[RMDB]
RNA sequence: GGGAACGACUCGAGUAGAGUCGAAAACGCUGGGGUGGAUGUGACAUGUCGGACCUGAAGCGCGCACGGGUCACGACAACAGCACAUCGUAACAUCCCUGUGCUGAAGCGCGCACGGCAACCGAAAGGUGCGAAAUCUACAGUUUCGACUGUAGAAAGCUGGUACUAGUGUUCGCACUAGUACCAGCAAAAGAAACAACAACAACAAC
Reactivity to 2A3 in 0.01 (KOAc 150mM, MgCl2 10mM, bicine 150mM(pH8.5), 24C), signal-to-noise 2, nucleotides 027 to 156: c020g000c040u050g040g000g000g000u010g030g000a020u000g010u030g060a110c090a230u080g000u000c000g010g010a010c000c000u040g100a260a060g030c010g000c020g000c040a040c000g000g000g020u010c070a120c300g010a040c010a110a030c060a020g050c000a010c000a000u000c010g050u120a050a030c000a130u090c000c000c010u000g070u050g010c040u100g050a140a050g000c000g000c000g000c000a000c000g100g010c060a160a120c010c000g050a180a000a000g010g000u000g000c030g010a020a040a100u020c000u000a000c000a010g020u050u070u210c160g170a030c000u000g000u000a000g000a020a000a000
Structure probing data (2A3) for a 207-nucleotide construct. The data come from the RNA Mapping Database (RMDB), library RNAMAK. The RNA was probed in 150 mM KOAc, 10 mM MgCl2 and 150 mM bicine (pH 8.5) at 24 C. Values cover nucleotides 27 to 156. 2A3 is a SHAPE reagent: it acylates the 2'-hydroxyl of flexible nucleotides of all four kinds.